[RMDB]
RNA sequence: GGGAACGACUCGAGUAGAGUCGAAAAGAUAUGGAGAUGUCUUACGGGAGCACUGCGUUUCGGAAACGAAACCAGUGCGAAGAACGUAAGAGCAUCUCCUAAGUCAAAAGGGAGCUUCGGCUCCCAACUCUACUCCAACGUUCGCGUUGGAGUAGAGAAAAGAAACAACAACAACAAC
Reactivity to DMS in 0.01 (KOAc 150mM, MgCl2 10mM, bicine 150mM(pH8.5), 24C), signal-to-noise 1, nucleotides 027 to 126: g000a020u020a300u000g000g020a000g070a000u000g000u000c000u020u000a020c000g000g000g040a140g050c040a000c000u000g030c300g020u000u000u010c030g000g000a070a130a240c020g000a030a000a020c000c000a000g000u000g000c000g020a000a140g000a150a180c000g000u000a010a000g000a100g000c000a000u020c000u020c020c000u000a000a120g000u000c020a080a040a220a160g000g000g010a010g070c030u000u000c270g060g010c000u000c000c000c010a000a010
Structure probing data (DMS) for a 177-nucleotide construct.